[RMDB]
RNA sequence: GGGAACGACUCGAGUAGAGUCGAAAAGGAUCCUCUCACAGGAUUGUCUCUGUGUUCCGAAACUCCAACAGUAUUGCGUCGGGACACCUACCGCAAUACUGUAGGUAUAGAGAGUAGGAGAGGAUCGCAUUAAUCGACGGUUCGCCGUCGAUUAAUGAAAAGAAACAACAACAACAAC
Reactivity to 2A3 in 0.01 (KOAc 150mM, MgCl2 10mM, bicine 150mM(pH8.5), 24C), signal-to-noise 3, nucleotides 027 to 126: g080g000a000u000c010c000u000c000u010c000a080c010a030g060g070a130u200u300g160u080c060u020c000u090g020u000g050u130u050c030c010g040a060a030a020c050u060c030c030a010a010c000a040g000u000a000u000u010g010c000g000u030c070g030g000g080a110c080a200c060c000u020a040c030c050g000c010a010a010u000a000c020u010g010u010a020g000g010u050a030u110a120g150a010g010a010g040u020a060g020g010a010g000a000g000g000a000u000c000g010
Reactivity to DMS in 0.01 (KOAc 150mM, MgCl2 10mM, bicine 150mM(pH8.5), 24C), signal-to-noise 5, nucleotides 027 to 126: g010g020a000u000c000c000u000c000u000c000a090c060a070g000g010a140u010u020g010u030c090u010c000u000g000u010g000u010u000c010c010g000a130a120a170c100u010c020c020a110a040c010a010g010u000a040u000u000g010c010g000u000c300g010g000g000a180c300a070c020c010u000a130c140c020g000c010a020a000u000a020c010u010g010u000a000g020g020u000a130u000a040g020a080g010a040g010u000a130g000g000a050g000a020g010g000a010u000c000g000